An RNA of 177 nucleotides, treated with 2A3 and DMS and read out base by base. It was measured as part of the RMDB library OK1LIB. For 2A3 the reverse transcriptase was SuperScript II with manganese. The DMS profile rests on 2,056 reads.
RNA sequence: GGGAACGACUCGAGUAGAGUCGAAAAGGUGAAGGCGGCGGAUUCGGCGGAAUCUGACGCCGGAGAGCUCGGCGAGGACGCGUGCCCAGAACAGGCCCUCGUCGAGCGGCGCCCGUCGCGGUUGCGGCUGAGUUAUUGCCUUCGGGCAAUAACUCAGAAAAGAAACAACAACAACAAC
Reactivity to 2A3 in 0.01 (KOAc 150mM, MgCl2 10mM, bicine 150mM(pH8.5), 24C), signal-to-noise 1, nucleotides 027 to 126: g150g000u220g110a140a040g080g020c000g000g000c000g090g130a090u000u020c010g070g000c070g090g050a000a020u030c040u060g060a020c000g000c000c000g000g000a000g000a000g000c010u000c000g000g010c030g000a010g020g000a110c150g020c080g170u100g030c110c090c050a080g040a100a040c110a060g030g020c000c000c030u000c000g000u000c000g000a000g020c000g000g030c010g030c010c000c010g000u040c000g000c000g030g070u070u070g000c040g000g000
Reactivity to DMS in 0.01 (KOAc 150mM, MgCl2 10mM, bicine 150mM(pH8.5), 24C), signal-to-noise 1, nucleotides 027 to 126: g020g000u030g010a080a070g000g010c020g000g010c000g000g000a100u000u000c030g010g030c160g000g000a030a040u000c170u000g000a060c000g060c000c000g000g000a060g000a250g010c030u000c000g000g000c030g030a030g040g030a050c090g040c130g020u010g000c060c020c140a120g040a090a260c080a100g000g000c050c000c000u010c000g010u000c000g000a000g000c000g000g000c200g000c090c030c040g010u000c000g020c040g030g000u000u000g000c080g000g040